This 207-nucleotide RNA was probed chemically with 2A3 and DMS. For 2A3, 2,193 sequencing reads were counted. It was measured as part of the RMDB library M2RFPK. The DMS profile rests on 2,991 reads. Conditions: 150 mM KOAc, 10 mM MgCl2 and 150 mM bicine (pH 8.5), 24 C.
[RMDB]
RNA sequence: GGGAACGACUCGAGUAGAGUCGAAAAUAAGCAAAAGACAACCACCUUUCCCGCUGACAAUAGCGUUAUCCCUCUGCACUUCGGUAAUAUGAGGGCACAGUCAAUCCCGCAAGGAUGAGAAUGUGAUUAAACAGUUACAGCUUCGGCUGUAACUGAAGCCAUAAAUACACUUCGGUGUAUUUAUGGCAAAAGAAACAACAACAACAAC
Reactivity to 2A3 in 0.01 (KOAc 150mM, MgCl2 10mM, bicine 150mM(pH8.5), 24C), signal-to-noise 4, nucleotides 027 to 156: u160a030a010g050c070a050a020a010a040g100a130c040a050a060c040c010a070c020c040u060u050u050c020c030c010g010c090u040g030a050c060a060a220u080a110g060c060g040u100u130a090u110c000c010c000u020c000u010g040c030a010c030u030u060c160g020g000u030a030a010u100a100u300g000a010g000g000g000c000a000c000a000g010u010c010a000a040u010c000c000c000g090c090a020a040g030g010a020u070g010a050g040a200a040u020g020u020g010a050u010u210a140a090a040c010a000g000u010u000a000c000a000g000c000u000u040c120g090g010c000u000g000u000a000a000c000u010g000a010a000
Reactivity to DMS in 0.01 (KOAc 150mM, MgCl2 10mM, bicine 150mM(pH8.5), 24C), signal-to-noise 2, nucleotides 027 to 156: u000a060a120g050c040a040a070a100a080g020a100c080a120a110c030c020a120c040c000u000u010u000c020c030c020g020c080u000g000a130c090a070a090u010a100g000c070g030u000u020a110u000c000c010c000u000c010u000g010c080a060c030u000u000c170g020g030u000a050a190u010a090u000g010a000g030g050g000c020a000c000a080g010u010c020a120a080u000c030c000c000g040c120a070a190g010g010a050u000g000a170g000a070a100u000g020u000g010a170u000u000a000a130a300c010a040g030u000u000a000c000a030g000c000u000u010c300g050g010c000u010g010u000a000a000c000u000g020a010a100